[RMDB]
RNA sequence: GGGAACGACUCGAGUAGAGUCGAAAAGAAAGGCGCGCCUGACAUCUAAAUGGAGUUGCCGCGAGAAACUCUUAGGAAAUAAAACUGGGAGGAAAUCGCGGUCCGCCUUUAUUUUGUAGGCAAGAAAGGGUAAUCUUUACUUCGGUAAAGAUUACCCAAAAGAAACAACAACAACAAC
Reactivity to DMS in 0.01 (KOAc 150mM, MgCl2 10mM, bicine 150mM(pH8.5), 24C), signal-to-noise 1, nucleotides 027 to 126: g000a160a130a030g000g040c080g040c240g000c000c020u000g010a070c100a000u000c000u040a040a010a020u000g000g000a080g020u020u010g040c000c000g000c010g000a050g000a260a000a260c000u000c000u010u000a010g000g000a070a050a270u000a080a120a150a120c000u000g000g000g000a000g000g000a090a090a130u000c000g040c000g020g000u000c210c030g030c000c000u040u000u000a010u010u100u050u000g000u070a040g000g010c040a110a020g060a090a070a090
Reactivity to 2A3 in 0.01 (KOAc 150mM, MgCl2 10mM, bicine 150mM(pH8.5), 24C), signal-to-noise 2, nucleotides 027 to 126: g090a010a040a020g150g000c040g000c030g020c040c000u100g050a030c000a050u000c010u040a040a100a090u160g020g000a020g020u070u020g010c020c010g020c000g010a000g010a020a140a010c000u000c000u000u000a000g060g090a100a140a140u240a110a180a100a060c000u020g000g010g000a020g000g000a000a300a000u000c000g000c000g000g020u000c000c080g020c020c000u000u010u010a030u000u010u000u030g000u000a000g040g000c100a090a000g060a120a070a000
Structure probing data (DMS and 2A3) for a 177-nucleotide construct. The RNA was probed in 150 mM KOAc, 10 mM MgCl2 and 150 mM bicine (pH 8.5) at 24 C. Source: RMDB library OK1LIB, as collected in RNAgym.